Source information: Conditions: 150 mM KOAc, 10 mM MgCl2 and 150 mM bicine (pH 8.5), 24 C. An RNA of 177 nucleotides, treated with 2A3 and DMS and read out base by base. For 2A3, 910 sequencing reads were counted. The DMS profile rests on 2,211 reads. For 2A3 the reverse transcriptase was SuperScript II with manganese.
RNA sequence: GGGAACGACUCGAGUAGAGUCGAAAAUUACUGUGCAAGCUGUGAAGGGUGGAGUUUUUGGAUAGCUGGUUUGGGAUACAUCCAGGAGGAAGUGGGCUACAAGCUAAAAUUGAUCUGUGCCCUCUGCACGACGAACAACAUUCGUGUUGUUCGUCGUAAAAGAAACAACAACAACAAC
Reactivity to 2A3 in 0.01 (KOAc 150mM, MgCl2 10mM, bicine 150mM(pH8.5), 24C), signal-to-noise 1, nucleotides 027 to 126: u000u010a050c010u050g000u110g090c020a030a140g020c010u050g040u120g130a050a020g010g100g030u060g030g010a030g050u030u040u030u210u070g040g000a060u040a090g020c020u030g000g070u070u100u170g070g000g000a030u030a080c020a050u000c050c000a030g000g030a000g030g000a040a060g010u070g070g000g020c000u130a030c000a090a010g010c010u060a040a030a050a230u090u110g080a090u000c030u010g080u000g060c000c020c000u020c000u030g000c020
Reactivity to DMS in 0.01 (KOAc 150mM, MgCl2 10mM, bicine 150mM(pH8.5), 24C), signal-to-noise 2, nucleotides 027 to 126: u000u010a080c040u010g010u000g020c100a080a130g020c080u000g020u000g010a080a110g010g000g010u010g020g000a110g010u000u000u000u000u000g010g010a070u000a080g030c080u010g020g010u010u010u000g000g020g000a160u010a080c120a060u000c020c030a070g000g000a100g010g010a070a070g010u000g000g000g010c020u000a050c110a050a080g010c090u000a060a050a080a140u010u000g000a090u000c070u000g030u010g000c000c010c040u010c010u010g000c200